The record gives the reactivity of an RNA of 177 nucleotides to 2A3 and DMS. High DMS reactivity at an A or C suggests that its Watson-Crick edge is free. The 2A3 profile rests on 11,798 reads.
[RMDB]
RNA sequence: GGGAACGACUCGAGUAGAGUCGAAAAGAUAUGGAUCCUGCUUUUGACGCUCUAGGGUCGGAAACGACCCGAAGAGCGAUAAGCUGGAUCCUAAGUCAAAACCAUGGCUUCUUCGGAAGCCAUGGAACUAUUGUUAAAACUUCGGUUUUAACAAUAGAAAAGAAACAACAACAACAAC
Reactivity to 2A3 in 0.01 (KOAc 150mM, MgCl2 10mM, bicine 150mM(pH8.5), 24C), signal-to-noise 4, nucleotides 027 to 126: g030a030u060a030u150g000g000a000u010c010c000u010g030c040u080u090u090u170g280a140c140g000c000u000c000u010a030g000g010g010u010c010g000g010a070a080a030c000g010a020c000c030c010g010a030a000g000a000g010c000g010a000u010a010a000g000c000u010g020g000a000u000c000c000u000a060a010g020u010c020a010a030a090a200c000c010a010u000g000g000c000u000u000c000u040u070c280g150g000a000a000g000c050c000a000u010g000g010a000a010
Reactivity to DMS in 0.01 (KOAc 150mM, MgCl2 10mM, bicine 150mM(pH8.5), 24C), signal-to-noise 6, nucleotides 027 to 126: g010a020u010a290u010g010g000a010u000c000c000u000g000c000u000u010u010u000g020a150c070g020c000u000c000u010a300g010g010g020u000c000g010g000a060a060a160c010g010a010c000c000c000g000a050a080g000a010g010c000g010a010u000a010a010g000c000u000g000g000a010u000c000c000u000a010a050g000u000c030a100a080a130a210c010c010a010u000g000g010c000u000u000c000u000u020c200g020g000a020a010g010c000c000a000u000g000g000a010a070